Conditions: 150 mM KOAc, 10 mM MgCl2 and 150 mM bicine (pH 8.5), 24 C. Structure probing data (DMS and 2A3) for a 177-nucleotide construct.

RNA sequence: GGGAACGACUCGAGUAGAGUCGAAAAUAGAAGCGAAACUCGCUCUCCAGCAGCAGAGGAUACUGUGUCUCACGUGUCUUAUGACAAUGUGUCUGUAGGGUUUGAGGGAGAGAGUUUGGAUGCUGAACUGCAGGACAAUGUUCGCAUUGUCCUGCAGAAAAGAAACAACAACAACAAC
Reactivity to DMS in 0.01 (KOAc 150mM, MgCl2 10mM, bicine 150mM(pH8.5), 24C), signal-to-noise 1, nucleotides 027 to 126: u040a080g000a240a090g030c010g010a060a050a090c000u020c020g010c040u000c010u000c030c010a050g010c020a160g000c020a040g020a160g030g020a020u000a040c050u040g030u000g020u010c080u000c090a050c040g000u020g010u050c050u000u000a080u010g010a000c060a080a050u010g020u010g000u000c040u000g010u010a140g030g020g010u010u000u000g000a140g020g000g040a010g010a020g000a030g000u000u000u000g020g000a080u000g030c000u010g000a140a140
Reactivity to 2A3 in 0.01 (KOAc 150mM, MgCl2 10mM, bicine 150mM(pH8.5), 24C), signal-to-noise 1, nucleotides 027 to 126: u080a010g090a040a000g060c020g020a030a000a010c000u000c030g010c000u010c010u000c010c020a020g030c000a040g000c010a000g030a030g270g000a020u040a080c070u220g030u060g090u300c060u160c060a070c040g110u160g090u100c040u140u190a230u260g020a000c020a060a110u070g050u000g040u000c000u000g030u120a060g110g100g010u120u100u130g080a180g060g000g000a030g010a000g010a030g010u000u060u050g110g010a100u110g000c000u000g010a040a070
Background
The DMS profile rests on 1,192 reads.